[RMDB]
An RNA of 207 nucleotides, treated with DMS and 2A3 and read out base by base. 2A3 adducts were read by reverse transcription with SuperScript II with manganese.

RNA sequence: GGGAACGACUCGAGUAGAGUCGAAAACGGACCGUUCGCGGUCCGAAAAAGCGUACUACGUGUGUGGUAAGGGAGAGCUAUGUCCCAAAUAGGACAUAUGCUCGAGGAUCUUACGUAACAUCACACGUAUCGCAAAAAAUGGCCGUUCGCGGCCAAAGGUAUCAAUUUGUUUCGACAAAUUGAUACCAAAAGAAACAACAACAACAAC
Reactivity to DMS in 0.01 (KOAc 150mM, MgCl2 10mM, bicine 150mM(pH8.5), 24C), signal-to-noise 1, nucleotides 027 to 156: c050g010g000a030c090c000g010u000u010c250g040c030g030g040u000c010c010g010a000a050a090a080a080g000c000g030u010a080c110u020a010c010g060u000g010u000g020u000g010g010u010a000a040g010g010g000a120g010a030g020c000u000a010u010g010u000c000c000c000a030a110a190u010a020g040g000a020c000a010u000a000u010g060c010u010c000g000a060g050g010a040u000c000u000u030a030c000g020u000a170a080c060a080u000c010a010c000a000c000g020u000a020u000c040g000c020a000a010a060a050a090a090u000g000g050c010c000g010u000u020c230g050c010g030g000c010c000a000a020a100
Reactivity to 2A3 in 0.01 (KOAc 150mM, MgCl2 10mM, bicine 150mM(pH8.5), 24C), signal-to-noise 3, nucleotides 027 to 156: c020g000g010a000c000c000g010u040u060c220g010c020g110g000u020c000c010g030a010a000a000a000a000g060c060g040u110a100c040u030a000c070g000u010g000u020g000u020g030g000u000a010a000g010g010g000a010g000a000g000c000u000a000u000g010u020c010c000c000a170a190a130u240a060g000g000a000c010a000u020a010u300g000c000u000c000g000a020g000g000a000u010c000u000u000a000c010g060u040a060a050c040a130u220c010a000c010a000c000g000u010a020u100c010g000c000a010a010a040a000a020a120u070g000g000c010c000g010u040u130c300g000c040g100g000c000c010a020a000a040

Values cover nucleotides 27 to 156. High DMS reactivity at an A or C suggests that its Watson-Crick edge is free. DMS adducts were read by reverse transcription with MarathonRT. The data come from the RNA Mapping Database (RMDB), library RNAMAK.